[RMDB]
Chemical mapping of a 207-nucleotide RNA with 2A3. The 2A3 profile rests on 657 reads.
RNA sequence: GGGAACGACUCGAGUAGAGUCGAAAAUUCAACGUCCGCUGGGCAUCGGGAAUCGACAUGGCUUAUACUGAAGCGCGCACGGUAUAGCCAACAGCGAUUUCUCUAGCGUGUGCCUGUGCUGAAGCGCGCACGGCAACCGAAAGGUGCGCCUGAUAUCCCUUGCGGCUUAGUUCGCUAAGCCGCAAGGAAAAGAAACAACAACAACAAC
Reactivity to 2A3 in 0.01 (KOAc 150mM, MgCl2 10mM, bicine 150mM(pH8.5), 24C), signal-to-noise 1, nucleotides 027 to 156: u090u020c110a130a050c100g070u010c000c000g000c000u030g010g000g050c000a030u090c080g000g030g040a010a030u000c010g210a180c130a120u060g000g000c010u290u120a000u000a000c000u020g060a140a050g030c000g000c000g000c040a030c030g000g000u000a010u000a000g000c030c000a060a030c000a080g130c010g010a010u000u160u020c030u010c030u130a140g090c110g080u250g000u010g110c020c020u100g050u110g110c000u010g000a010a000g040c000g000c000g000c000a010c090g020g000c000a010a040c010c000g020a100a050a000g000g020u020g030c190g000c000c010u000g070a010u030a140u150c020